[RMDB]
RNA sequence: GGGAACGACUCGAGUAGAGUCGAAAAAAAAAGAGCGUAAUCGCGUCAUUGAGUGACGUGAAGAUCAUCCAAGUGUGCUGUCUACAGUCGUAGAUAGCGCACAAUACGCUGAUGAUCAUUGAAAAAAGUAUCGGUACAACUUCGGUUGUACCGAUACAAAAGAAACAACAACAACAAC
Reactivity to DMS in 0.01 (KOAc 150mM, MgCl2 10mM, bicine 150mM(pH8.5), 24C), signal-to-noise 1, nucleotides 027 to 126: a030a080a050a010a030g000a030g010c030g000u010a050a050u000c050g000c000g010u030c000a050u000u000g000a100g040u000g000a000c000g000u000g000a080a080g000a010u000c000a000u000c020c120a070a120g030u000g010u010g000c040u000g000u000c010u030a000c000a170g070u010c210g000u000a000g010a000u000a030g030c000g030c010a000c010a050a030u010a210c060g010c000u000g000a040u000g000a020u000c010a160u010u020g000a000a130a040a040a030a100
Reactivity to 2A3 in 0.01 (KOAc 150mM, MgCl2 10mM, bicine 150mM(pH8.5), 24C), signal-to-noise 2, nucleotides 027 to 126: a000a000a000a000a000g120a030g000c030g040u090a000a050u030c000g000c000g010u000c000a030u060u270g180a060g230u030g000a030c000g000u010g030a040a040g000a020u010c000a010u000c020c020a240a200g020u010g000u000g020c010u000g000u000c000u000a070c070a210g140u250c130g000u110a010g000a020u010a000g000c000g010c000a000c000a000a000u030a010c030g010c060u020g000a000u000g000a000u000c030a020u040u300g080a170a100a010a000a000a020